[RMDB]
RNA sequence: GGGAACGACUCGAGUAGAGUCGAAAAGCAAAUAUUGUCUUAAUGACUUAGGCUAAAAGAAAUAAGUAUUAAAGCGGGACAAGGCAUCGACAUUUGAUACAAAUAUUGAUCAAUGGAUGUCUUAUUUAAACCUCAUCCGGCUUCGGCCGGAUGAGAACCUAAACUAAGUGUUCGCACUUAGUUUAGGAAAAGAAACAACAACAACAAC
Reactivity to DMS in 0.01 (KOAc 150mM, MgCl2 10mM, bicine 150mM(pH8.5), 24C), signal-to-noise 2, nucleotides 027 to 156: g010c040a080a080a100u000a050u000u000g000u000c000u000u000a120a150u010g020a030c030u010u000a060g000g020c030u010a110a090a100a110g000a140a070a110u000a010a100g010u000a070u000u000a050a030a090g010c070g010g030g000a050c050a030a020g000g000c010a010u000c000g010a050c050a030u000u000u000g030a060u010a110c060a060a100a150u000a120u000u010g000a060u000c010a040a040u000g000g020a030u000g020u010c030u020u000a070u000u000u000a060a070a150c120c010u000c000a000u000c030c000g020g060c000u010u000c300g070g070c020c030g000g040a000u000g000a000g000a040a040
Reactivity to 2A3 in 0.01 (KOAc 150mM, MgCl2 10mM, bicine 150mM(pH8.5), 24C), signal-to-noise 4, nucleotides 027 to 156: g010c010a030a050a040u190a150u180u130g030u020c020u100u270a250a160u220g040a050c010u040u080a020g020g010c010u080a080a060a020a000g060a020a110a050u130a070a040g030u040a050u100u100a140a050a020g050c080g030g010g030a020c030a060a000g000g000c000a000u000c030g100a090c040a050u080u070u180g030a030u140a060c050a050a180a020u210a100u200u220g010a010u000c000a000a000u010g020g000a000u000g000u000c000u000u000a010u010u060u040a050a030a010c000c000u000c000a000u000c000c020g010g010c000u040u070c100g110g000c000c000g000g000a000u000g000a000g000a000a000

Source information: The record gives the reactivity of an RNA of 207 nucleotides to DMS and 2A3. For 2A3, 3,590 sequencing reads were counted. Reactivities are given for positions 27 through 156. It was measured as part of the RMDB library M2RFPK. The DMS profile rests on 3,381 reads. Conditions: 150 mM KOAc, 10 mM MgCl2 and 150 mM bicine (pH 8.5), 24 C. Values are in units of 0.01, from 0 to 300, in steps of 10.